This 177-nucleotide RNA was probed chemically with DMS and 2A3. The 2A3 profile rests on 781 reads. The data come from the RNA Mapping Database (RMDB), library OK1LIB. Conditions: 150 mM KOAc, 10 mM MgCl2 and 150 mM bicine (pH 8.5), 24 C.

RNA sequence: GGGAACGACUCGAGUAGAGUCGAAAAAGCUGUGUUUGUACGUUUUGAUUCGUGGGUGACACUUCAGGCCGAUUGUUAUAGUUGUUUGGUUUGUGGCCUGGUGGCUUUAACAGCGGUGUGUUAUGGCCAAUAUUUAUAUUUUCGAAUAUAAAUAUUGAAAAGAAACAACAACAACAAC
Reactivity to DMS in 0.01 (KOAc 150mM, MgCl2 10mM, bicine 150mM(pH8.5), 24C), signal-to-noise 5, nucleotides 027 to 126: a080g010c060u020g010u000g000u010u010u020g020u020a050c090g010u000u000u000u010g000a200u010u010c030g020u000g000g000g020u010g000a070c060a050c050u010u010c040a050g000g010c010c010g000a090u030u010g010u010u020a070u020a130g010u000u010g010u010u010u000g010g010u010u020u000g030u030g010g010c010c010u000g000g020u010g000g010c020u000u010u000a020a020c050a070g010c050g010g020u010g010u010g000u000u000a030u010g000g010c070
Reactivity to 2A3 in 0.01 (KOAc 150mM, MgCl2 10mM, bicine 150mM(pH8.5), 24C), signal-to-noise 2, nucleotides 027 to 126: a000g050c070u050g020u030g040u080u130u100g060u040a010c020g020u000u090u090u070g090a100u000u080c000g020u020g010g040g040u080g050a000c010a010c000u070u150c040a020g000g010c010c010g040a080u040u050g030u110u050a130u040a160g000u000u030g010u020u050u140g130g000u050u100u090g060u030g030g000c000c000u000g020g010u020g010g010c000u100u070u080a070a010c000a000g010c000g030g020u030g000u000g000u030u050a050u050g030g000c000